[RMDB]
RNA sequence: GGGAACGACUCGAGUAGAGUCGAAAAGGCAAGAAUCGGACGCUCUCCCCACGACGCUGGAGACAUCCUGGAAGGGGAAAGAGGCAAAACGGAAGAGAAGGGGGGGCCUCCCGAUCCGAGGGGCCCAACCACCAAGUUUGGAGAGCACUCCGGGCCGCAGUAACAAUAGGUUCGCCUAUUGUUACUGAAAAGAAACAACAACAACAAC
Reactivity to 2A3 in 0.01 (KOAc 150mM, MgCl2 10mM, bicine 150mM(pH8.5), 24C), signal-to-noise 1, nucleotides 027 to 156: g040g010c090a060a080g090a180a160u140c030g000g000a000c030g010c000u020c000u030c010c010c000c010a020c090g180a050c100g050c110u020g030g040a040g020a040c040a100u060c000c000u090g040g060a080a110g070g020g010g000a040a120a000g100a000g040g000c040a050a050a030a030c020g090g000a120a020g020a070g040a200a240g000g000g000g000g000g000g010c020c000u040c000c010c010g040a080u120c100c050g020a050g050g010g010g000c000c000c010a020a030c010c020a050c010c020a160a000g010u000u030u070g020g010a020g000a000g000c000a030c150u010c020c010g010g010g000c000c000g000

Conditions: 150 mM KOAc, 10 mM MgCl2 and 150 mM bicine (pH 8.5), 24 C. Chemical mapping of a 207-nucleotide RNA with 2A3. Values cover nucleotides 27 to 156. Source: RMDB library VIROID, as collected in RNAgym.